[RMDB]
RNA sequence: GGGAACGACUCGAGUAGAGUCGAAAAGGGGUCGUCGCUAACGCUCGAAGAACGUACGUAGUUUACUGAAGCCUCCACGGUAAGGUUCGAAGUACGGGAGAGCGGACCCGACGACGGAGGCACCCAAAAGAAAUGCGAAGUUCGCUUCGCAUUUCAAGAUCUAUCCCGACUUCGGUCGGGAUAGAUCAAAAGAAACAACAACAACAAC
Reactivity to 2A3 in 0.01 (KOAc 150mM, MgCl2 10mM, bicine 150mM(pH8.5), 24C), signal-to-noise 5, nucleotides 027 to 156: g030g000g000g000u050c000g000u010c010g000c040u060a100a010c000g000c010u030c010g200a300a020g010a010a000c000g000u010a000c010g020u060a040g000u060u030u060a020c000u020g050a180a050g010c000c000u050c050c030a050c020g020g010u040a020a020g040g070u090u120c050g080a200a010g000u000a000c010g000g000g000a020g000a000g000c000g000g000a010c000c000c010g000a000c000g000a000c020g000g000a010g000g000c020a070c020c010c020a040a130a020a040g010a000a000a010u000g000c000g000a010a000g010u040u100c170g050c140u000u000c000g000c000a000u000u000u000c000a000a010
Conditions: 150 mM KOAc, 10 mM MgCl2 and 150 mM bicine (pH 8.5), 24 C. An RNA of 207 nucleotides, treated with 2A3 and read out base by base. Values cover nucleotides 27 to 156. The 2A3 profile rests on 8,540 reads. It was measured as part of the RMDB library RNAMAK.